[RMDB]
RNA sequence: GGGAACGACUCGAGUAGAGUCGAAAAGCAGCACUCCAGAGCGUGGCACACAGUAGGCACUCUACAAAUAUGUAUGGAGUGAAUGGAUGAGUGCCUUGUGGUUGCUGGGGAGCCACUGUGGGGCAGAAGUCAUAGACCCUUGGGAGGCAGAGGGCUACAUUAUGGGUCAGUUCGCUGACCCAUAAUGAAAAGAAACAACAACAACAAC
Reactivity to 2A3 in 0.01 (KOAc 150mM, MgCl2 10mM, bicine 150mM(pH8.5), 24C), signal-to-noise 3, nucleotides 027 to 156: g010c050a010g020c020a030c060u010c030c010a010g030a050g110c060g050u080g000g030c010a000c000a010c010a090g180u170a030g030g000c000a000c010u020c020u020a050c050a080a060a120u260a070u160g120u100a060u170g100g040a060g090u110g020a050a070u130g040g060a050u110g010a010g000u010g000c000c030u000u070g040u020g000g090u100u110g030c040u040g000g010g000g010a020g050c050c000a040c020u060g050u070g030g010g000g000c010a020g010a100a000g020u040c040a010u030a080g120a160c010c000c020u010u020g040g010g010a040g000g030c040a030g040a020g010g010g010c000u030a020
Reactivity to DMS in 0.01 (KOAc 150mM, MgCl2 10mM, bicine 150mM(pH8.5), 24C), signal-to-noise 1, nucleotides 027 to 156: g060c070a040g000c060a110c000u000c020c020a120g020a070g020c090g050u000g010g060c030a100c060a060c030a120g000u000a020g010g040c000a040c000u010c000u000a220c050a070a080a170u020a080u010g060u000a130u020g000g020a040g030u000g000a040a120u010g020g020a150u010g000a070g000u000g000c000c000u000u010g010u000g040g030u000u010g020c020u000g000g030g020g010a120g020c010c020a060c030u000g000u010g000g000g030g020c020a090g000a110a100g010u000c040a110u000a140g000a110c020c020c050u000u000g020g040g010a150g020g030c030a080g000a050g000g020g030c020u010a130